Source: RMDB library OK2TRN, as collected in RNAgym. An RNA of 177 nucleotides, treated with 2A3 and DMS and read out base by base.
RNA sequence: GGGAACGACUCGAGUAGAGUCGAAAAAGCCUCAACAGCACAGGCUCCUUGUGGCCAGGCUGCAUAUGGCCAGUUUGGCCAAGGAGAUGUACAGAAUGGGCCAAGCUCCACUGUUCAGAUGCAAAGGGGAGUAGACGUGUUUCGACACGUCUACUCCAAAAGAAACAACAACAACAAC
Reactivity to 2A3 in 0.01 (KOAc 150mM, MgCl2 10mM, bicine 150mM(pH8.5), 24C), signal-to-noise 2, nucleotides 027 to 126: a010g060c020c000u040c020a060a060c050a040g020c010a010c010a070g190g000c040u020c000c000u070u100g140u110g070g010c000c000a000g000g000c000u000g000c000a100u180a260u300g220g000c110c030a000g000u000u000u000g000g000c010c010a000a000g000g000a010g000a000u040g010u030a020c000a010g120a160a300u170g000g040g000c070c100a080a000g000c020u000c000c010a040c030u010g000u090u020c020a030g060a290u030g030c030a060a070a110g150g000
Reactivity to DMS in 0.01 (KOAc 150mM, MgCl2 10mM, bicine 150mM(pH8.5), 24C), signal-to-noise 1, nucleotides 027 to 126: a120g040c010c000u000c190a060a190c240a110g020c020a050c070a130g020g000c020u000c030c000u000u030g040u020g010g000c000c000a000g000g010c000u000g020c070a200u000a090u030g020g010c230c010a000g000u000u010u010g000g000c010c000a010a010g010g010a040g030a150u010g000u000a040c040a040g000a050a180u000g000g000g000c030c130a050a070g000c080u000c000c050a060c030u000g030u000u000c040a070g010a070u000g010c030a040a130a210g000g020
Record summary
For DMS, 893 sequencing reads were counted. The reactions ran in a buffer of 150 mM KOAc, 10 mM MgCl2 and 150 mM bicine (pH 8.5), at 24 C. For DMS the reverse transcriptase was MarathonRT.